[RMDB]
RNA sequence: GGGAACGACUCGAGUAGAGUCGAAAAGAACGGGUAGUAUCCUAAUGCGAACUGCACCUGGUUAUGGUAGACAAGGCUAAAAAUAAGGUGUUUUCCGCUUGGAGCCAAUGGACCGAGACGGGGGGAAAUUCGCGCUACAAUUCGUUGUAGCGCGAAUAAAAGAAACAACAACAACAAC
Reactivity to 2A3 in 0.01 (KOAc 150mM, MgCl2 10mM, bicine 150mM(pH8.5), 24C), signal-to-noise 1, nucleotides 027 to 126: g190a090a000c120g080g000g000u180a150g010u010a070u160c000c000u130a220a000u050g020c000g040a010a000c010u020g030c000a010c000c000u000g000g040u020u070a300u110g090g000u030a030g020a030c160a040a090g130g000c100u180a200a040a040a000a060u070a070a030g000g000u010g010u030u000u000u070c000c000g070c020u090u110g000g000a020g000c020c000a020a030u180g020g020a060c020c070g000a000g000a030c050g040g000g020g030g000g090a050a050
Reactivity to DMS in 0.01 (KOAc 150mM, MgCl2 10mM, bicine 150mM(pH8.5), 24C), signal-to-noise 1, nucleotides 027 to 126: g050a070a070c100g000g000g000u010a040g000u000a090u000c050c000u000a060a040u020g010c060g010a080a050c050u020g000c000a030c000c000u000g030g000u000u070a030u020g000g070u020a030g020a110c300a030a060g000g000c000u000a000a120a000a000a060u040a110a030g000g000u060g000u000u020u000u000c100c020g020c020u000u000g000g000a110g110c000c080a030a100u040g090g000a250c000c000g030a200g000a110c070g000g000g000g060g020g000a030a000